[RMDB]
Structure probing data (2A3 and DMS) for a 207-nucleotide construct. For DMS, 1,849 sequencing reads were counted. 2A3 adducts were read by reverse transcription with SuperScript II with manganese. The RNA was probed in 150 mM KOAc, 10 mM MgCl2 and 150 mM bicine (pH 8.5) at 24 C. Reactivities are given for positions 27 through 156.

RNA sequence: GGGAACGACUCGAGUAGAGUCGAAAAACGGAUGGUACGCCAUCCGACCAUUGGGUAGAAGCGUUCAAUCAGCACCGUGACGGUGCAGAUGGGAAAUUGCCCAUGAUACGCACCAUACGUGGUGUGAAAAAGCCAUCGGUGUUCGCACCGAUGGCAACUAUGCCCAACUGUUCGCAGUUGGGCAUAGAAAAGAAACAACAACAACAAC
Reactivity to 2A3 in 0.01 (KOAc 150mM, MgCl2 10mM, bicine 150mM(pH8.5), 24C), signal-to-noise 3, nucleotides 027 to 156: a000c020g000g000a020u010g000g030u060a020c250g040c040c010a000u000c000c000g000a010c020c000a080u040u080g020g000g010u060a070g030a150a000g010c050g050u080u090c080a040a070u000c020a000g000c010a010c000c030g120u230g230a140c250g000g000u000g000c030a020g000a000u010g020g010g000a000a120a070u090u030g010c000c000c010a000u060g050a020u030a030c030g010c010a000c000c000a010u060a090c180g050u050g010g000u000g020u010g020a040a060a030a030a000g000c000c000a000u000c000g010g000u000g030u040u040c140g030c110a000c000c000g010a000u000g000g000c000a000a000
Reactivity to DMS in 0.01 (KOAc 150mM, MgCl2 10mM, bicine 150mM(pH8.5), 24C), signal-to-noise 1, nucleotides 027 to 156: a100c020g010g060a020u010g000g000u000a080c140g110c010c000a070u020c010c020g010a030c020c000a180u010u010g030g000g010u020a030g010a070a070g040c130g010u000u020c030a080a040u000c010a120g030c000a000c000c010g020u000g020a180c290g050g020u000g030c000a080g010a000u000g010g000g010a060a140a090u000u010g000c000c000c010a030u000g020a100u020a080c010g000c020a020c030c000a060u020a040c220g000u020g030g040u000g020u020g000a000a100a010a110a150g020c000c000a020u000c010g080g030u000g010u020u020c300g070c010a010c020c000g010a000u000g000g010c000a050a000